[RMDB]
RNA sequence: GGGAACGACUCGAGUAGAGUCGAAAAAGACUUGGGGUGGGGCAGUUGGCCAUGUCACUCAUCUCGGGACUGGGAGGUUGGGAGGCUCCAGAGCUGGGGCUUUCCUGAGGCCAACUGCACCUGAGGCGAUUGUGUAGUACUUCGGUACUACACAAUCAAAAGAAACAACAACAACAAC
Reactivity to DMS in 0.01 (KOAc 150mM, MgCl2 10mM, bicine 150mM(pH8.5), 24C), signal-to-noise 4, nucleotides 027 to 126: a110g010a120c030u000u010g020g010g010g020u010g040g010g010g010c010a010g000u010u000g000g010c010c010a160u000g000u000c090a090c080u000c050a090u000c050u010c130g000g020g000a160c280u010g010g000g010a050g020g010u000u000g000g000g000a030g000g000c000u000c010c000a050g010a170g010c220u000g000g000g000g000c010u000u000u010c000c000u000g010a100g000g000c010c000a010a030c010u000g000c000a010c000c020u010g000a040g020g000c180
Reactivity to 2A3 in 0.01 (KOAc 150mM, MgCl2 10mM, bicine 150mM(pH8.5), 24C), signal-to-noise 3, nucleotides 027 to 126: a000g060a030c030u070u050g000g000g030g020u140g020g050g110g050c000a010g000u010u000g000g000c010c000a060u140g100u070c020a020c090u070c030a130u040c050u040c030g130g080g080a090c110u160g070g020g000a040g050g000u140u090g040g000g000a000g000g000c000u000c010c010a090g070a090g270c270u070g000g000g000g000c000u020u070u000c010c000u000g020a050g000g000c000c000a000a000c000u000g000c010a030c000c000u010g010a020g020g050c090
Conditions: 150 mM KOAc, 10 mM MgCl2 and 150 mM bicine (pH 8.5), 24 C. An RNA of 177 nucleotides, treated with DMS and 2A3 and read out base by base. The DMS profile rests on 5,318 reads. 2A3 adducts were read by reverse transcription with SuperScript II with manganese. For 2A3, 4,892 sequencing reads were counted. It was measured as part of the RMDB library OK2TRN. Reactivities are given for positions 27 through 126.